[RMDB]
RNA sequence: GGGAACGACUCGAGUAGAGUCGAAAAAUGGUCAGUUUUAUGACUGGCACUUACUGGUGUGGCAAAGCAAGGACUGCCUGGUGUUAACUAGGUGAAUGAAAUUGAGAAUAGACUCUGGAAAUUCAGUUGCUAGCUGGCAUUAAGGAACUGCUUGAGACAUAGGGGAGGGAUUCGUCCCUCCCCUAUGAAAAGAAACAACAACAACAAC
Reactivity to DMS in 0.01 (KOAc 150mM, MgCl2 10mM, bicine 150mM(pH8.5), 24C), signal-to-noise 2, nucleotides 027 to 156: a080u030g000g050u000c020a040g000u000u000u000u020a060u010g030a040c010u030g020g020c020a130c100u000u000a070c030u000g020g010u000g040u020g040g000c060a060a050a090g010c050a060a130g010g020a110c110u000g000c030c030u000g090g000u000g000u020u000a030a070c020u000a020g010g060u000g010a070a050u000g000a050a080a200u060u000g010a060g000a070a260u000a120g010a090c070u000c050u000g020g000a050a050a190u000u000c060a020g000u000u000g010c010u000a060g030c010u000g010g000c040a090u000u010a050a050g000g020a060a050c030u000g040c000u030u000g000a120g010a190
Reactivity to 2A3 in 0.01 (KOAc 150mM, MgCl2 10mM, bicine 150mM(pH8.5), 24C), signal-to-noise 1, nucleotides 027 to 156: a000u200g050g020u010c000a010g030u000u030u030u150a190u220g080a020c000u010g050g010c010a010c080u050u130a010c000u050g020g000u030g020u050g000g050c030a030a050a020g040c040a040a020g020g010a070c050u060g050c030c000u010g060g000u040g030u130u070a140a060c060u000a000g130g000u020g010a010a030u080g020a070a010a060u060u130g030a040g040a030a060u080a090g050a050c000u060c000u000g050g050a000a030a100u090u050c000a000g020u010u050g130c000u010a010g030c000u020g030g010c000a040u030u140a020a010g030g010a010a010c030u020g000c040u000u030g060a000g000a060